Overview: The record gives the reactivity of an RNA of 207 nucleotides to DMS and 2A3. Source: RMDB library RNAMAK, as collected in RNAgym. Reactivities are given for positions 27 through 156. For 2A3 the reverse transcriptase was SuperScript II with manganese. Reactivities are rounded to 0.1 and cut off at 0 and 3. The RNA was probed in 150 mM KOAc, 10 mM MgCl2 and 150 mM bicine (pH 8.5) at 24 C.
[RMDB]
RNA sequence: GGGAACGACUCGAGUAGAGUCGAAAACUCCAGUUUCGACUGGAGAAAAAGCGUACUACUAGCAUCGAUCUAUCCUCACUGACCACGGACUCCCAAAUAGGAGUCUAUCAAGUGGGAUAGGGAGCUAGUAUCGCAAAAAUGAGUCUUCGGACUCAAACGAACGUUAUAAGUUCGCUUAUAACGUUCGAAAAGAAACAACAACAACAAC
Reactivity to DMS in 0.01 (KOAc 150mM, MgCl2 10mM, bicine 150mM(pH8.5), 24C), signal-to-noise 2, nucleotides 027 to 156: c000u000c000c000a010g020u000u000u010c300g040a130c030u010g000g000a040g010a000a040a050a070a110g030c030g030u010a120c150u020a060c000u000a040g000c010a230u000c160g010a110u010c000u020a020u000c020c000u000c030a030c010u000g000a190c130c090a070c110g000g010a020c000u000c000c000c040a040a130a250u000a060g000g010a020g040u000c000u000a020u000c030a020a060g010u000g030g010g010a030u000a020g000g040g010a070g020c010u010a020g000u000a000u020c020g040c030a010a020a080a180a120u000g010a010g020u000c000u000u000c300g030g000a070c010u000c000a010a040a160
Reactivity to 2A3 in 0.01 (KOAc 150mM, MgCl2 10mM, bicine 150mM(pH8.5), 24C), signal-to-noise 4, nucleotides 027 to 156: c000u000c000c010a000g000u030u080u210c220g130a040c040u010g050g010a010g050a090a020a010a010a000g030c030g030u090a080c030u000a000c000u000a030g000c010a180u280c040g050a030u010c010u010a000u010c000c030u220c020a000c000u010g040a060c050c050a100c280g000g000a000c010u010c000c030c010a080a250a030u150a060g010g000a000g000u010c000u000a040u070c010a050a120g010u000g010g000g000a000u000a000g000g010g000a010g000c000u000a010g000u000a010u090c000g020c010a090a050a000a010a020u060g000a000g010u000c000u010u080c200g130g000a010c000u000c000a030a000a000